[RMDB]
Background: The data come from the RNA Mapping Database (RMDB), library M2PK50. Chemical mapping of a 177-nucleotide RNA with 2A3 and DMS. For DMS, 1,207 sequencing reads were counted. Values are in units of 0.01, from 0 to 300, in steps of 10.
RNA sequence: GGGAACGACUCGAGUAGAGUCGAAAACGUGAGAGGUUCGCCUCUCACGAAAUAAAAGCUCGAAUAAAUAAAAGCGUAAGAGCAAGAACGCAAAAUAAAUAAAAAGUUAGUACUUCGGUACUAACAACAGUAUGGUUAAGUUCGCUUAACCAUACUGAAAAGAAACAACAACAACAAC
Reactivity to 2A3 in 0.01 (KOAc 150mM, MgCl2 10mM, bicine 150mM(pH8.5), 24C), signal-to-noise 3, nucleotides 027 to 126: c010g000u010g000a000g000a010g030g000u070u080c150g050c080c010u020c000u000c000a010c000g000a000a000a000u060a010a070a010a020g010c000u020c060g120a150a160u140a300a120a020u120a060a100a090a000g020c010g000u030a050a070g010a010g060c040a040a040g100a070a020c000g000c010a040a070a040a180u140a070a170a030u190a080a110a070a020a000g000u010u000a000g000u010a000c010u030u050c270g080g000u000a000c000u010a000a000c000a000a010
Reactivity to DMS in 0.01 (KOAc 150mM, MgCl2 10mM, bicine 150mM(pH8.5), 24C), signal-to-noise 2, nucleotides 027 to 126: c030g030u000g000a030g010a010g000g020u000u000c190g020c000c000u000c020u030c000a000c000g000a030a070a100u010a100a130a150a200g010c010u000c020g030a090a090u020a090a110a040u000a100a110a110a120g000c000g020u000a190a210g010a080g010c100a070a070g000a060a060c020g010c010a080a060a050a070u000a100a050a110u060a020a050a120a040a120g000u000u000a000g000u000a020c000u000u000c180g040g000u000a000c010u000a000a010c010a100a110

The reactions ran in a buffer of 150 mM KOAc, 10 mM MgCl2 and 150 mM bicine (pH 8.5), at 24 C.